[RMDB]
RNA sequence: GGGAACGACUCGAGUAGAGUCGAAAAGAUAUGGAGUUCAUUCGUCUUUUGACGCUUACUUAUCGGAAACGAUAAGGAAGCGAUAAGACGAUGAACUCCUAAGUCAAAGCCUCGGUUCGCCGAGGCAGGCAUAACCUAGGUUCGCCUAGGUUAUGCCAAAAGAAACAACAACAACAAC
Reactivity to 2A3 in 0.01 (KOAc 150mM, MgCl2 10mM, bicine 150mM(pH8.5), 24C), signal-to-noise 2, nucleotides 027 to 126: g050a000u050a030u220g000g000a040g020u030u020c020a040u300u230c010g000u000c020u120u130u150u210g290a140c080g000c020u010u100a000c000u000u000a010u000c010g020g010a080a080a030c010g000a000u000a010a000g000g000a020a000g000c010g010a000u030a040a010g000a000c040g010a000u000g000a000a010c000u000c000c000u010a030a010g000u000c020a040a070a080g010c000c020u000c010g020g010u040u070c300g010c060c020g000a000g020g000c010a010
Reactivity to DMS in 0.01 (KOAc 150mM, MgCl2 10mM, bicine 150mM(pH8.5), 24C), signal-to-noise 2, nucleotides 027 to 126: g010a050u000a300u000g000g010a030g010u000u000c020a040u000u000c010g010u000c000u000u000u000u000g010a220c060g000c000u010u000a120c000u020u000a000u020c010g000g010a130a150a170c000g010a010u000a000a000g000g000a050a040g000c000g010a080u000a000a010g000a050c000g040a020u000g000a000a000c000u000c000c000u010a000a030g000u000c040a170a090a150g000c000c000u000c020g010g010u000u010c300g040c000c000g000a030g000g040c010a000